Chemical mapping of a 177-nucleotide RNA with 2A3 and DMS. Conditions: 150 mM KOAc, 10 mM MgCl2 and 150 mM bicine (pH 8.5), 24 C.

[RMDB]
RNA sequence: GGGAACGACUCGAGUAGAGUCGAAAACAGCGUGGGUGUGUAGACGUCGGAUUCUCGGACCCGUCGCAGGAUUUCCAACCCGUCCACAUCGGGAAGCAUGAUGUCGAGGACCAGCACAUCGGGGCCGUGCGUGUGUAGAAUUCGUUCUACACACGCAAAAAGAAACAACAACAACAAC
Reactivity to 2A3 in 0.01 (KOAc 150mM, MgCl2 10mM, bicine 150mM(pH8.5), 24C), signal-to-noise 2, nucleotides 027 to 126: c030a010g040c070g070u060g010g030g020u150g000u010g020u130a020g010a070c080g050u080c100g070g030a120u090u000c010u010c040g000g080a030c030c000c040g070u070c060g000c020a030g050g030a090u070u090u000c020c040a050a060c040c000c010g030u000c040c050a070c040a110u080c010g010g020g050a060a020g000c060a090u160g030a060u060g080u080c040g040a060g020g090a050c000c010a010g000c050a010c020a050u080c000g000g000g090g000c030c000g030
Reactivity to DMS in 0.01 (KOAc 150mM, MgCl2 10mM, bicine 150mM(pH8.5), 24C), signal-to-noise 4, nucleotides 027 to 126: c120a120g010c110g040u010g000g000g020u010g020u010g000u020a030g010a040c300g010u010c130g020g000a150u000u000c020u000c040g000g010a060c020c030c020g000u000c070g010c020a090g020g010a150u010u000u000c070c020a140a190c070c010c000g000u000c040c130a050c120a080u010c020g000g010g000a100a060g010c090a100u010g000a100u000g000u010c080g020a160g000g010a110c040c050a120g000c060a090c100a080u010c050g000g010g020g010c120c070g040
The 2A3 profile rests on 1,750 reads.